The data come from the RNA Mapping Database (RMDB), library M2RFPK. This 207-nucleotide RNA was probed chemically with 2A3. The reactions ran in a buffer of 150 mM KOAc, 10 mM MgCl2 and 150 mM bicine (pH 8.5), at 24 C. Reactivities are given for positions 27 through 156. For 2A3 the reverse transcriptase was SuperScript II with manganese.
RNA sequence: GGGAACGACUCGAGUAGAGUCGAAAAGCAACUUAGGAUUUUAGCCUCCCCGUGCGUGUCUCGAACCAUGCCGGGCCAAACCCACGGGGGCUGGCGGUCCCCGUGCGGUCAAAAUCAAACCGCUGGAAAAACAGUUCUAGCUUCGGCUAGAACUGAACGUUAAAAAGUACUUCGGUACUUUUUAACGAAAAGAAACAACAACAACAAC
Reactivity to 2A3 in 0.01 (KOAc 150mM, MgCl2 10mM, bicine 150mM(pH8.5), 24C), signal-to-noise 2, nucleotides 027 to 156: g020c020a030a110c080u170u210a170g070g000a150u160u130u100u190a110g080c000c010u070c040c010c020c010g080u140g040c010g030u050g030u010c080u100c270g070a070a030c020c000a010u000g000c010c000g000g030g000c030c020a080a080a010c010c000c000a000c000g010g000g010g000g000c000u000g000g000c000g000g000u010c000c000c010c000g000u010g020c110g030g000u030c000a060a110a040a110u130c030a120a110a110c010c010g010c050u070g040g000a060a120a000a010a010c000a000g000u000u000c000u000a000g000c010u030u010c160g050g000c000u000a000g000a000a000c000u000g000a000a000